An RNA of 177 nucleotides, treated with 2A3 and DMS and read out base by base. 2A3 adducts were read by reverse transcription with SuperScript II with manganese.
RNA sequence: GGGAACGACUCGAGUAGAGUCGAAAAGGAUCCUCUCACAGGAUUGUCUCCGUGUUCCGAAACUCCAACAGUAUUGCUUCGGGACACCUACAGCAAUACUGUAGGUAUGGAGAGUAGGAGAGGAUCGCUGCUCAUGAGGUUUCGACCUCAUGAGCAGAAAAGAAACAACAACAACAAC
Reactivity to 2A3 in 0.01 (KOAc 150mM, MgCl2 10mM, bicine 150mM(pH8.5), 24C), signal-to-noise 2, nucleotides 027 to 126: g040g020a010u000c010c010u000c020u000c020a190c100a180g080g120a270u190u230g060u120c010u000c010c000g020u000g000u040u000c010c010g020a020a030a020c030u110c140c050a100a060c020a190g140u130a140u080u220g040c020u030u040c040g000g000g010a010c010a010c000c000u000a000c010a020g060c070a070a230u110a300c020u030g000u010a000g000g020u070a050u260g000g000a010g010a000g060u130a040g090g000a010g000a000g020g000a000u000c000g000
Reactivity to DMS in 0.01 (KOAc 150mM, MgCl2 10mM, bicine 150mM(pH8.5), 24C), signal-to-noise 2, nucleotides 027 to 126: g000g000a000u010c000c000u000c010u010c000a060c150a170g010g010a170u020u010g000u000c010u000c010c000g010u020g010u000u050c020c000g000a020a020a100c030u030c150c200a090a130c250a130g030u020a250u000u000g000c060u010u000c140g010g010g000a020c130a050c000c000u000a000c040a020g040c060a070a120u010a300c000u000g000u000a000g020g000u000a080u000g000g000a050g000a080g020u010a050g000g010a040g000a010g020g000a000u000c000g010